[RMDB]
RNA sequence: GGGAACGACUCGAGUAGAGUCGAAAACGAGGAGGUGGAGAUGCCAUGCCGACCCGAAGAGGAAAGAAGAACGCGAGACGCGAACCUGUGAGUGGAAACCCGCUUUAUUCACUGGGGUCGACAGCUCAACGCACGCGCUUCGGCGCGUGCAAAAGAAACAACAACAACAAC
Reactivity to 2A3 in 0.01 (KOAc 150mM, MgCl2 10mM, bicine 150mM(pH8.5), 24C), signal-to-noise 3, nucleotides 027 to 129: c050g020a020g000g000a020g010g000u030g010g020a080g000a050u120g010c020c020a010u060g000c000c020g050a060c000c010c030g000a030a000g010a010g030g030a060a030a020g010a020a000g010a040a000c060g010c040g080a050g010a040c070g080c040g030a020a050c000c040u020g000u050g040a040g020u020g030g000a020a010a030c000c010c000g070c060u060u100u050a070u040u050c040a040c140u030g000g000g000g050u040c000g010a020c010a040g000c000u000c000a050a080c050
Reactivity to DMS in 0.01 (KOAc 150mM, MgCl2 10mM, bicine 150mM(pH8.5), 24C), signal-to-noise 2, nucleotides 027 to 129: c050g000a080g000g050a020g020g070u040g000g000a000g030a070u010g030c050c010a070u040g110c050c030g010a100c000c000c000g010a050a040g050a070g050g010a000a050a060g020a110a090g010a050a050c000g010c130g020a240g000a030c010g020c050g010a070a100c000c000u030g050u050g020a070g020u000g020g020a040a100a080c040c000c060g040c140u000u050u040a080u020u020c080a050c090u030g000g000g090g010u040c020g020a020c090a130g010c050u000c010a050a060c080
The data come from the RNA Mapping Database (RMDB), library 15KLIB. An RNA of 170 nucleotides, treated with 2A3 and DMS and read out base by base. The RNA was probed in 150 mM KOAc, 10 mM MgCl2 and 150 mM bicine (pH 8.5) at 24 C. The DMS profile rests on 6,859 reads. High DMS reactivity at an A or C suggests that its Watson-Crick edge is free.